An RNA of 177 nucleotides, treated with 2A3 and DMS and read out base by base. For DMS the reverse transcriptase was MarathonRT. For DMS, 2,556 sequencing reads were counted. The data come from the RNA Mapping Database (RMDB), library RFM100.

[RMDB]
RNA sequence: GGGAACGACUCGAGUAGAGUCGAAAACUCUCGGGCGCCAGCUGACGGAUUGCAAUGUCACCACGCGCGGGGAUAGAUCCUCUGCAGACGACUGAAAUGACCAAGCGGGUCGUGUAAGCGGUCAAGUAUACAUCCCUCGAUUCGUCGAGGGAUGUAUAAAAGAAACAACAACAACAAC
Reactivity to 2A3 in 0.01 (KOAc 150mM, MgCl2 10mM, bicine 150mM(pH8.5), 24C), signal-to-noise 2, nucleotides 027 to 126: c020u010c000u000c010g030g030g020c010g020c000c010a050g040c040u050g020a020c030g060g000a120u090u190g020c020a030a080u140g080u080c010a030c070c020a020c070g040c000g010c020g000g000g020g000a070u130a140g090a050u050c010c000u060c020u080g000c000a050g000a080c030g060a040c040u090g040a080a040a100u100g020a030c010c010a070a020g050c080g060g030g000u000c000g000u000g010u040a070a010g020c010g000g060u020c030a060a020g030u000
Reactivity to DMS in 0.01 (KOAc 150mM, MgCl2 10mM, bicine 150mM(pH8.5), 24C), signal-to-noise 2, nucleotides 027 to 126: c080u050c040u010c030g000g000g000c020g000c040c080a100g000c130u000g000a110c050g000g020a170u020u020g020c050a050a120u040g020u000c050a110c040c110a120c140g030c050g030c050g010g040g010g000a080u020a130g000a120u020c000c010u000c060u050g010c000a180g000a060c030g000a080c020u000g000a040a070a040u030g000a060c010c010a110a100g050c010g010g000g050u020c000g040u000g000u010a060a120g000c080g000g000u030c020a060a120g000u010